[RMDB]
RNA sequence: GGGAACGACUCGAGUAGAGUCGAAAAGAUAUGGACCACCCAGGCUUUUGACGCUGUGUCGGAAACGACCAGCGAUAAGCCUGUGGUGGUCCUAAGUCAAACGGAUGGGCGUUCGCGCCCAUCCGAACAUUAUAUGCUGCUUCGGCAGCAUAUAAUGAAAAGAAACAACAACAACAAC
Reactivity to 2A3 in 0.01 (KOAc 150mM, MgCl2 10mM, bicine 150mM(pH8.5), 24C), signal-to-noise 2, nucleotides 027 to 126: g010a010u080a000u130g000g000a000c000c010a010c000c030c000a000g000g020c010u110u190u140u270g210a140c030g000c020u130g070u110g000u300c010g010g030a050a050a060c000g000a000c000c010a000g020c020g010a000u000a010a000g000c020c000u000g000u020g000g000u000g000g000u010c000c000u010a010a000g000u000c000a010a000a020c020g000g000a000u010g010g010g010c040g070u100u160c300g020c040g040c140c000c030a000u000c000c000g010a000a000
Reactivity to DMS in 0.01 (KOAc 150mM, MgCl2 10mM, bicine 150mM(pH8.5), 24C), signal-to-noise 4, nucleotides 027 to 126: g000a050u000a300u010g000g010a020c000c000a000c000c000c000a030g000g000c000u000u000u010u000g010a190c050g010c000u000g000u020g000u000c010g000g010a090a080a180c010g020a010c000c000a010g010c000g000a020u000a010a010g010c000c000u000g010u010g010g020u000g000g010u000c000c000u000a010a050g010u000c030a100a100a240c020g000g010a010u000g010g010g030c000g020u000u010c250g020c020g040c010c000c000a000u000c000c000g010a010a080
Structure probing data (2A3 and DMS) for a 177-nucleotide construct. The 2A3 profile rests on 4,517 reads. Values cover nucleotides 27 to 126. For 2A3 the reverse transcriptase was SuperScript II with manganese. The RNA was probed in 150 mM KOAc, 10 mM MgCl2 and 150 mM bicine (pH 8.5) at 24 C. Source: RMDB library TTRDEL, as collected in RNAgym.